[RMDB]
RNA sequence: GGGAACGACUCGAGUAGAGUCGAAAAGAAAGAAACAGUUGGCUAGCAGAACGCACGAGGAUUAAAGCCAACCGUGCGAGUCGGAAGGCACGACCGACAAGAAAAGCCCUACAAUCGUGCAAGAAAAAGUAAUAUCCAGCUUCGGCUGGAUAUUACUAAAAGAAACAACAACAACAAC
Reactivity to 2A3 in 0.01 (KOAc 150mM, MgCl2 10mM, bicine 150mM(pH8.5), 24C), signal-to-noise 2, nucleotides 027 to 126: g040a000a070a000g080a000a120a010c050a040g010u020u000g030g000c080u080a130g050c070a050g130a230a040c010g000c030a000c000g050a020g100g030a030u200u250a160a040a010g000c000c010a000a000c000c010g000u050g020c010g030a010g010u030c010g000g060a050a030g150g000c010a000c000g000a000c010c000g010a010c010a030a000g030a060a070a000a000g030c000c020c000u030a030c070a010a040u070c020g040u050g000c010a010a020g090a010a070a020a000
Reactivity to DMS in 0.01 (KOAc 150mM, MgCl2 10mM, bicine 150mM(pH8.5), 24C), signal-to-noise 3, nucleotides 027 to 126: g000a090a070a190g000a130a140a020c030a110g010u000u000g000g010c000u010a080g010c120a110g010a080a170c060g000c010a070c040g000a080g000g000a050u010u040a140a170a060g010c000c000a030a040c020c040g000u000g010c030g020a140g000u010c000g000g000a060a080g000g000c020a010c070g010a050c000c020g000a020c010a120a170g000a080a060a070a120g000c010c000c020u000a090c220a120a050u000c010g010u000g030c020a150a180g000a090a040a090a040